Structure probing data (2A3 and DMS) for a 207-nucleotide construct. The 2A3 profile rests on 1,627 reads.
RNA sequence: GGGAACGACUCGAGUAGAGUCGAAAAGGGGGGAUCGUCCUCGUUAUCAACGUCAAAGCCAAUAAUAACUGGCAAAGAAAAACAAAACCUAGCUUUCGCUGCCUAAUAAGCAGUAGCAUAGCUGAUCCUCCGUGCAUCGCCCAUGUGCUACGGAAAGCUAAUCGUGUUGGUUCGCCAACACGAUUAGAAAAGAAACAACAACAACAAC
Reactivity to 2A3 in 0.01 (KOAc 150mM, MgCl2 10mM, bicine 150mM(pH8.5), 24C), signal-to-noise 3, nucleotides 027 to 156: g010g000g000g000g000g010a090u290c020g080u090c010c000u000c040g090u060u040a100u090c020a000a010c010g040u010c040a000a040a130g020c010c020a050a010u160a160a020u150a140a110c090u060g010g010c000a040a080a050g060a000a080a030a020a020c100a020a120a000a000c040c100u070a020g010c010u030u020u020c030g000c000u010g000c000c000u090a100a050u220a170a000g000c010a000g000u020a040g020c030a050u030a030g000c010u110g020a060u050c010c040u000c010c010g000u010g010c020a010u050c030g080c000c010c000a020u060g010u020g000c030u070a000c000g010g000a050a070a010g000
Reactivity to DMS in 0.01 (KOAc 150mM, MgCl2 10mM, bicine 150mM(pH8.5), 24C), signal-to-noise 1, nucleotides 027 to 156: g000g010g010g010g010g010a050u000c000g000u000c010c000u000c030g030u000u000a120u000c100a030a060c070g000u000c040a080a100a230g010c000c000a010a030u000a150a110u000a150a080c130u000g030g040c010a040a100a170g000a020a020a030a130a140c060a070a040a110a060c050c040u000a090g010c000u000u010u010c030g030c000u010g010c010c000u000a120a120u010a080a050g020c010a010g000u000a090g090c030a040u000a030g020c020u000g000a150u010c010c030u000c000c000g010u010g000c010a000u000c060g000c030c000c020a200u000g000u000g000c010u000a030c000g020g000a050a040a040g010
The reactions ran in a buffer of 150 mM KOAc, 10 mM MgCl2 and 150 mM bicine (pH 8.5), at 24 C.
DMS adducts were read by reverse transcription with MarathonRT.